Annotation:
The record gives the reactivity of an RNA of 177 nucleotides to 2A3. Source: RMDB library OK1LIB, as collected in RNAgym.
RNA sequence: GGGAACGACUCGAGUAGAGUCGAAAACAGUGAUGGAAACAUCACUGAAAAACCGGAAACGGACAUGACGAUCGCGCACAUGUCGGGAAACCGUAAAGGCGAAAAGAGCUAGCGAAAGCUAGCUCAAGGUAAUCAGCCGUUUCGACGGCUGAUUACCAAAAGAAACAACAACAACAAC
Reactivity to 2A3 in 0.01 (KOAc 150mM, MgCl2 10mM, bicine 150mM(pH8.5), 24C), signal-to-noise 1, nucleotides 027 to 126: c000a000g010u000g000a000u000g020g000a000a010a010c000a000u000c000a000c000u020g020a070a080a000a010a000c020c000g070g040a000a140a000c050g070g000a000c080a050u010g070a030c020g110a180u140c050g000c000g000c080a000c000a070u030g030u000c000g000g050g000a130a070a000c010c000g000u110a090a040a000g140g020c120g030a070a080a020a200g000a000g000c030u000a010g060c030g050a060a040a000g000c000u010a000g000c030u000c000a000a000